[RMDB]
RNA sequence: GGGAACGACUCGAGUAGAGUCGAAAAACACACGCUACAAAAACACGCAUCACGUAUUGGUGAACGAGGAAUGUUUAUUCAUUGGGGAAGCUACUGCGAUAAACACGAUGGCACCCAUAUUCACAUACUUUCUUCAAUUUUCCCCAACUCGACCAUCAUAUGCUCGGUUAUUCGUAACCGAGCAUAUAAAAGAAACAACAACAACAAC
Reactivity to DMS in 0.01 (KOAc 150mM, MgCl2 10mM, bicine 150mM(pH8.5), 24C), signal-to-noise 2, nucleotides 027 to 156: a060c040a060c060a030c070g020c020u010a300c050a030a060a050a070a050c060a070c000g000c020a130u000c050a080c030g000u000a080u000u000g030g010u000g020a040a090c080g010a120g010g000a080a050u010g010u000u000u010a040u010u000c070a120u000u030g020g010g050g000a070a080g030c030u040a060c040u000g040c040g010a140u000a100a150a080c050a050c030g010a050u000g040g090c040a100c040c040c000a100u000a150u000u000c060a060c020a040u000a060c020u000u000u010c030u020u010c040a060a100u000u010u000u000c010c000c000c080a060a090c060u000c050g020a070c060c040a080u010c050
Reactivity to 2A3 in 0.01 (KOAc 150mM, MgCl2 10mM, bicine 150mM(pH8.5), 24C), signal-to-noise 3, nucleotides 027 to 156: a000c070a010c030a010c070g080c050u140a090c090a090a130a040a020a020c070a030c100g040c010a060u090c020a010c060g040u070a090u060u070g050g010u040g040a040a040c060g030a030g020g020a020a030u050g040u050u110u090a100u070u110c090a030u040u020g010g000g010g020a090a040g000c010u040a040c030u080g040c020g030a040u140a080a160a010c070a000c040g100a110u030g000g010c010a060c010c000c020a020u060a030u050u120c020a020c010a070u090a040c040u010u050u070c000u030u050c040a060a210u060u050u050u070c000c010c000c000a020a020c020u050c080g060a040c070c030a010u130c030
This 207-nucleotide RNA was probed chemically with DMS and 2A3.
Source: RMDB library OK3TST, as collected in RNAgym.
Conditions: 150 mM KOAc, 10 mM MgCl2 and 150 mM bicine (pH 8.5), 24 C.
For DMS, 2,919 sequencing reads were counted.